[RMDB]
Chemical mapping of a 207-nucleotide RNA with 2A3 and DMS.
RNA sequence: GGGAACGACUCGAGUAGAGUCGAAAAGGUCAAGUUCGCUUGACCGUAAUUUCCUAAGUCCGUUUGACGACCUUUGUCAGCUAUGUGUUCGGAAACGAACAUUUAGCUUGGAUUUAAGGUCCGAGGAUAUGGAGCAGAGCAAGGUUUCGACCUUGAAGACAUAGUGAGGUUUCGACCUCACUAUGUCAAAAGAAACAACAACAACAAC
Reactivity to 2A3 in 0.01 (KOAc 150mM, MgCl2 10mM, bicine 150mM(pH8.5), 24C), signal-to-noise 6, nucleotides 027 to 156: g000g000u010c000a000a000g000u020u130c180g070c170u000u000g000a000c000c000g000u010a040a130u030u070u010c000c000u020a100a050g110u000c030c040g020u030u100u160g090a080c060g000a000c010c000u010u010u030g010u010c010a000g000c000u000a000u020g010u000g000u000u000c000g030g060a100a110a110c010g000a010a000c000a000u000u000u000a000g000c000u010u070g040g000a020u110u170u220a010a000g000g000u000c000c000g010a020g010g000a010u030a120u170g050g020a060g070c080a060g000a020g120c000a000a000g050g020u060u140u230c160g100a110c000c000u020u020g060a110a040
Reactivity to DMS in 0.01 (KOAc 150mM, MgCl2 10mM, bicine 150mM(pH8.5), 24C), signal-to-noise 4, nucleotides 027 to 156: g030g000u000c000a010a020g020u000u000c300g030c010u000u000g000a020c010c010g040u000a020a080u010u000u000c010c010u010a080a180g010u000c010c010g010u000u000u010g020a300c140g000a020c000c010u000u010u000g020u000c000a050g000c000u000a000u000g000u000g020u000u000c010g000g000a180a140a300c000g000a040a000c000a010u000u000u000a010g030c010u020u010g030g020a030u000u010u000a010a020g030g010u000c000c000g020a300g000g010a030u000a100u010g010g010a140g040c100a130g030a200g020c030a020a030g010g020u000u000u000c210g020a070c020c000u000u000g000a090a190
Description: The data come from the RNA Mapping Database (RMDB), library RNAMAK. For DMS the reverse transcriptase was MarathonRT. The RNA was probed in 150 mM KOAc, 10 mM MgCl2 and 150 mM bicine (pH 8.5) at 24 C.